Chemical mapping of a 177-nucleotide RNA with 2A3 and DMS. 2A3 adducts were read by reverse transcription with SuperScript II with manganese. The 2A3 profile rests on 631 reads.
[RMDB]
RNA sequence: GGGAACGACUCGAGUAGAGUCGAAAAACAAUAUCGCCGUAAUAACAGUACAGUUUAUGAUGCUAAAAUUCCACAAGAUGUACUUAAUGCCGCAGAUGAAUAUGCAAAACUGUAUGAACCUGCUGAACCGUUGUGAGAUGUUCGCAUCUCACAACGGAAAAGAAACAACAACAACAAC
Reactivity to 2A3 in 0.01 (KOAc 150mM, MgCl2 10mM, bicine 150mM(pH8.5), 24C), signal-to-noise 1, nucleotides 027 to 126: a000c130a030a030u110a070u150c030g020c060c010g020u060a060a120u050a040a070c040a000g040u010a010c020a030g010u000u020u020a190u100g080a020u090g030c000u080a130a050a090a130u090u020c040c010a040c020a100a130g050a090u020g030u110a020c000u090u040a030a040u050g030c030c050g000c070a040g000a050u050g000a010a050u030a000u110g000c060a070a020a050a000c040u060g020u010a000u020g040a000a040c000c010u000g100c040u050g100a050a040
Reactivity to DMS in 0.01 (KOAc 150mM, MgCl2 10mM, bicine 150mM(pH8.5), 24C), signal-to-noise 1, nucleotides 027 to 126: a090c050a040a030u030a020u000c080g000c070c010g000u000a150a070u000a130a130c130a070g030u030a030c030a000g000u000u000u000a060u020g000a090u000g090c030u040a060a120a130a010u000u010c000c000a040c150a100a030g030a110u000g100u000a050c150u000u000a020a110u000g000c040c060g020c060a060g000a040u000g010a110a020u000a090u000g030c030a020a000a040a110c020u000g000u000a050u010g000a140a040c200c060u000g040c000u000g000a080a190